[RMDB]
RNA sequence: GGGAACGACUCGAGUAGAGUCGAAAAUAGGCGAACGAGAGGCCCUCUCUUGUGCGGAGUUGUCACGCUGACAUAAUUGUUAUGAUGUCCGAUUCCGGUAGCAUCGCGGCGAUGAUUUCAUAGGACAUCUUAUGAACCCAAGGGCUUCGGGGAAGCAGCCUAUCGUCAUAUUCGUAUGACGAUAGGCAAAAGAAACAACAACAACAAC
Reactivity to DMS in 0.01 (KOAc 150mM, MgCl2 10mM, bicine 150mM(pH8.5), 24C), signal-to-noise 1, nucleotides 027 to 156: u000a130g040g000c030g000a040a050c040g020a230g000a020g020g010c080c020c020u000c060u010c000u030u000g020u000g000c130g010g010a170g020u010u010g010u010c020a200c050g040c140u020g000a130c060a120u000a000a170u010u000g030u010u010a060u000g020a080u000g030u000c000c010g010a250u000u000c050c050g020g020u020a070g000c020a060u000c040g030c050g040g020c120g010a060u010g000a090u010u010u000c030a050u020a110g020g020a060c080a040u000c020u000u000a040u000g000a140a160c070c050c010a070a050g000g020g010c040u010u000c040g020g020g030g070a120a080g000c000a100
Reactivity to 2A3 in 0.01 (KOAc 150mM, MgCl2 10mM, bicine 150mM(pH8.5), 24C), signal-to-noise 2, nucleotides 027 to 156: u080a000g110g000c030g020a050a000c070g020a000g000a050g100g020c000c030c000u030c000u010c000u060u170g130u110g050c190g030g010a040g060u120u160g040u090c020a010c040g040c070u040g080a010c000a060u100a110a060u120u080g070u130u070a090u080g000a000u000g020u030c030c010g010a080u210u000c040c010g050g020u010a050g010c050a040u070c070g000c000g030g130c080g090a050u060g010a040u010u190u140c060a050u080a050g030g000a010c020a020u010c000u000u050a080u010g030a060a060c000c040c000a040a060g010g000g000c000u040u010c020g000g000g000g000a020a030g070c030a010

Structure probing data (DMS and 2A3) for a 207-nucleotide construct. The 2A3 profile rests on 934 reads. It was measured as part of the RMDB library OK3TST.